[RMDB]
RNA sequence: GGGAACGACUCGAGUAGAGUCGAAAAAUUGCCAUACGUGGCAGAAACACGCCUUACCAGGACUAAACAGCGUGUCUAAAAAACAGUCCUUCAUACCUGAUCUGGAGGGUAGAUCAGGAAUACUAAAAAAAUCGGGUGAAGUUCGCUUCACCCGAAACACUUACAUGCGCUUCGGCGCAUGUAAGUGAAAAGAAACAACAACAACAAC
Reactivity to 2A3 in 0.01 (KOAc 150mM, MgCl2 10mM, bicine 150mM(pH8.5), 24C), signal-to-noise 2, nucleotides 027 to 156: a000u040u020g000c000c000a050u050a050c260g060u020g000g000c000a000g060a000a070a000c000a000c000g020c000c010u030u020a020c040c060a000g000g000a000c010u080a150a010a000c000a010g000c020g030u000g020u060c110u040a020a040a020a010a000a000c010a000g000u000c000c000u040u100c020a090u060a190c000c000u000g000a000u010c000u020g080g020a040g040g040g060u060a010g000a000u010c010a000g010g030a000a010u110a040c090u140a020a000a020a050a000a030a120u020c000g000g000g000u020g000a000a010g020u050u120c160g050c120u000u000c000a000c000c000c000g000a000a020a000
Chemical mapping of a 207-nucleotide RNA with 2A3. Values cover nucleotides 27 to 156. The 2A3 profile rests on 1,302 reads.